[RMDB]
RNA sequence: GGGAACGACUCGAGUAGAGUCGAAAAUAGGACAUGGUGCUGAAAGUGUAAAAGGACAUUUAGGCGAGCGUUCUUUAUACAGUUUUCAAGAGAAACAACUCGGUACUGCGCAUGCAGUGCAAAUGGCUCCUACGUUAGGGUUCGCCCUAACGUAGGAAAAAGAAACAACAACAACAAC
Reactivity to DMS in 0.01 (KOAc 150mM, MgCl2 10mM, bicine 150mM(pH8.5), 24C), signal-to-noise 2, nucleotides 027 to 126: u040a050g020g020a040c110a020u010g040g030u000g010c090u030g000a010a020a010g000u000g000u000a090a110a120a090g040g000a010c070a080u000u010u070a210g000g020c000g000a060g000c120g000u000u000c000u000u020u090a070u020a050c080a070g000u000u000u000u040c080a070a080g000a100g040a110a020a000c260a090a130c090u000c020g020g000u000a030c050u000g000c010g000c290a070u040g000c000a000g000u020g000c000a010a040a150u040g000g000c190
Reactivity to 2A3 in 0.01 (KOAc 150mM, MgCl2 10mM, bicine 150mM(pH8.5), 24C), signal-to-noise 2, nucleotides 027 to 126: u170a070g100g000a030c010a030u130g070g020u130g070c060u010g070a090a000a050g090u080g000u070a030a080a030a000g010g010a000c030a070u080u050u110a130g030g020c060g000a030g000c030g000u000u000c000u000u020u000a250u000a060c060a150g060u000u010u020u180c140a160a050g010a000g000a070a090a050c020a050a020c050u000c020g000g000u010a010c020u000g030c020g030c020a050u300g000c000a030g000u010g020c000a030a030a030u030g040g010c010
Structure probing data (DMS and 2A3) for a 177-nucleotide construct. For DMS, 1,840 sequencing reads were counted. For 2A3, 712 sequencing reads were counted. For 2A3 the reverse transcriptase was SuperScript II with manganese.